[RMDB]
RNA sequence: GGGAACGACUCGAGUAGAGUCGAAAAUAUCUAACAGAUCUGAGGCAAACAGAGCUCAAGGCUUGGCUGGACAUCGAACAUCCAGGGACUCCUGGACAGGUGUACCAUCGGUUGUUCGGUCUCAGAUCUCAAAAUGCGGGUUCGCCCGCAUUUUGAGAAAAGAAACAACAACAACAAC
Reactivity to DMS in 0.01 (KOAc 150mM, MgCl2 10mM, bicine 150mM(pH8.5), 24C), signal-to-noise 2, nucleotides 027 to 126: u010a080u100c040u000a140a110c230a040g000a000u000c050u000g010a010g030g010c000a120a120a120c030a050g020a010g010c020u020c170a050a070g010g000c030u030u000g000g000c060u000g090g000a020c060a000u030c000g000a040a050c190a240u000c010c010a070g000g050g000a200c180u100c000c000u000g020g000a010c300a140g000g010u000g000u000a020c010c000a030u000c050g000g030u050u030g000u020u000c090g100g030u000c000u000c000a000g000a000u000